[RMDB]
RNA sequence: GGGAACGACUCGAGUAGAGUCGAAAACCCGAGGUUCGCCUCGGGAAAAAGCGUACUACCGACCCAAGCUGCCACACCAAUUAUAAUCCCAAAUAGGAUUAUAGAGUGUGGAACUACAGCUGGGUCGGUAUCGCAAAAACAUCGGUUCGCCGAUGAAGACGAAUAAAAGGUUCGCCUUUUAUUCGUCAAAAGAAACAACAACAACAAC
Reactivity to 2A3 in 0.01 (KOAc 150mM, MgCl2 10mM, bicine 150mM(pH8.5), 24C), signal-to-noise 4, nucleotides 027 to 156: c010c000c000g000a010g020g030u140u100c220g110c070c020u020c020g010g000g030a050a020a010a010a000g040c020g020u060a070c070u000a010c050c000g000a010c000c010c010a080a050g000c000u010g010c020c000a000c010a010c020c020a060a020u300u020a010u030a000a010u010c020c000c040a130a270a150u300a190g000g000a000u000u010a000u010a030g080a210g030u000g000u000g010g010a010a000c070u250a050c030a000g010c000u000g000g000g000u000c000g010g010u000a000u010c000g010c000a070a000a000a000a000c000a000u010c000g040g010u080u060c220g040c130c020g000a010u040g010a020a040
Reactivity to DMS in 0.01 (KOAc 150mM, MgCl2 10mM, bicine 150mM(pH8.5), 24C), signal-to-noise 2, nucleotides 027 to 156: c000c000c010g010a050g000g000u000u000c170g050c020c000u000c010g000g030g010a010a010a040a120a090g000c040g020u020a030c160u000a020c010c000g000a030c000c000c000a080a130g030c020u000g000c000c070a040c010a030c000c010a070a250u000u000a030u000a040a000u000c000c000c010a050a140a240u000a050g010g020a010u010u000a010u000a060g020a070g020u000g020u010g000g000a010a050c020u020a300c000a000g000c010u000g010g010g030u000c010g000g010u000a000u000c020g000c030a050a050a060a050a160c020a010u000c000g030g000u000u010c300g030c020c000g000a040u000g020a050a130
An RNA of 207 nucleotides, treated with 2A3 and DMS and read out base by base. Values are in units of 0.01, from 0 to 300, in steps of 10. For 2A3 the reverse transcriptase was SuperScript II with manganese. The reactions ran in a buffer of 150 mM KOAc, 10 mM MgCl2 and 150 mM bicine (pH 8.5), at 24 C. Reactivities are given for positions 27 through 156. Source: RMDB library RNAMAK, as collected in RNAgym. DMS adducts were read by reverse transcription with MarathonRT. For DMS, 3,627 sequencing reads were counted. High 2A3 reactivity points to a flexible backbone, as in loops and unpaired stretches.